RNA sequence: GGGAACGACUCGAGUAGAGUCGAAAAGCGUGAGCUGAAGGCAAGUGCGUAUGCAAAUGCAUCCGAGAAACUGCAGUCGGUGGAGGAUAACUUUUUUGAGGUACUUACCAAGCGCAGCGACUCGUUGCCCUAGGAUAGGCUUCGGCCUAUCCUAGGGAAAAGAAACAACAACAACAAC
Reactivity to DMS in 0.01 (KOAc 150mM, MgCl2 10mM, bicine 150mM(pH8.5), 24C), signal-to-noise 3, nucleotides 027 to 126: g000c040g040u040g010a170g000c000u010g000a110a130g030g000c000a080a110g000u000g000c010g040u010a050u020g020c000a050a090a080u060g000c010a060u020c110c010g020a020g000a080a090a200c020u020g000c030a040g020u020c300g000g030u000g000g010a010g050g030a210u020a120a030c030u000u010u080u020u060u040g010a140g000g000u010a050c020u000u010a050c040c010a070a170g000c260g020c020a010g000c100g050a250c030u000c030g020u000u010g000
Reactivity to 2A3 in 0.01 (KOAc 150mM, MgCl2 10mM, bicine 150mM(pH8.5), 24C), signal-to-noise 4, nucleotides 027 to 126: g020c020g000u080g030a040g000c020u040g040a080a020g120g010c020a040a040g060u040g090c020g040u020a010u040g010c010a040a100a110u300g000c000a030u030c010c000g000a000g030a080a130a010c010u050g000c020a070g030u050c070g080g020u050g060g030a040g020g020a110u080a210a160c000u110u060u030u030u080u300g070a060g000g030u020a020c010u040u030a050c000c010a020a040g010c010g000c030a000g000c020g040a050c020u000c050g040u020u080g040
Overview: This 177-nucleotide RNA was probed chemically with DMS and 2A3. The RNA was probed in 150 mM KOAc, 10 mM MgCl2 and 150 mM bicine (pH 8.5) at 24 C. For 2A3 the reverse transcriptase was SuperScript II with manganese.